RNA sequence: GGGAACGACUCGAGUAGAGUCGAAAACUGGCGCUCCCGGCGGGGAUCCAUCCAGGGGAGCCGAACGGCAUGGGAGGGCCGGCGGCACAGGGUUACAGCCCCGUAGGCGCACCCUGGGAUGGACCCCCGUGCCGAUCAUGUUCGCAUGAUCGGCACGAAAAGAAACAACAACAACAAC
Reactivity to 2A3 in 0.01 (KOAc 150mM, MgCl2 10mM, bicine 150mM(pH8.5), 24C), signal-to-noise 2, nucleotides 027 to 126: c040u060g060g010c060g000c030u010c010c000c000g020g020c040g010g000g000g010a170u010c000c000a000u000c010c000a000g000g000g020g000a020g000c000c010g010a050a010c020g000g010c030a040u060g060g040g000a070g010g020g000c000c010g000g000c010g000g030c030a040c030a030g000g050g000u070u170a060c020a020g000c000c000c020c020g010u020a020g010g000c030g020c150a070c000c000c000u020g000g030g020a000u000g000g010a000c010c010c000c000
Reactivity to DMS in 0.01 (KOAc 150mM, MgCl2 10mM, bicine 150mM(pH8.5), 24C), signal-to-noise 2, nucleotides 027 to 126: c070u000g000g020c020g000c030u000c040c000c040g010g000c000g020g030g000g010a090u020c000c000a010u000c020c000a030g000g030g000g000a300g000c000c000g000a000a000c030g000g000c010a000u000g010g020g000a160g000g030g000c000c000g000g000c030g040g000c190a020c020a230g000g000g020u010u090a070c150a070g000c050c020c000c000g000u010a300g000g010c000g020c110a300c000c000c000u000g050g040g010a010u000g000g020a040c000c040c040c000